Source information:
Structure probing data (DMS and 2A3) for a 177-nucleotide construct.
[RMDB]
RNA sequence: GGGAACGACUCGAGUAGAGUCGAAAAAUGCAGUACUCGUCGCUAGACGAUGAUCCUAGCUACGUACGACAGCGAUACUAGAUAGUACCGACGAUCACAUGGUACUGCUAGACGUACCAUGCUAGUCGAGUCGAGUAGAUUUCGAUCUACUCGACUCAAAAGAAACAACAACAACAAC
Reactivity to DMS in 0.01 (KOAc 150mM, MgCl2 10mM, bicine 150mM(pH8.5), 24C), signal-to-noise 3, nucleotides 027 to 126: a030u000g010c060a070g030u020a100c110u000c050g000u000c020g010c160u010a060g020a040c040g030a040u020g010a130u010c130c000u010a020g000c010u000a190c220g000u000a040c010g010a160c130a080g020c080g000a090u010a090c020u000a080g000a120u000a050g020u000a040c020c000g000a110c140g000a160u030c250a120c150a050u000g010g010u000a010c000u000g010c020u020a020g000a240c040g010u000a000c010c010a110u000g000c020u010a070g000u010c150
Reactivity to 2A3 in 0.01 (KOAc 150mM, MgCl2 10mM, bicine 150mM(pH8.5), 24C), signal-to-noise 3, nucleotides 027 to 126: a000u160g000c050a020g090u070a070c040u000c030g010u010c000g060c140u100a080g030a070c030g070a080u180g020a040u070c010c010u000a010g000c010u010a030c050g020u020a010c010g040a040c030a030g130c080g100a040u060a150c020u030a020g250a300u080a020g020u020a020c020c010g050a090c080g120a240u190c060a040c030a190u140g010g010u010a000c000u000g000c000u000a000g030a050c010g000u000a000c000c000a010u110g010c030u040a020g020u100c040
Reactivities are given for positions 27 through 126. The 2A3 profile rests on 3,134 reads.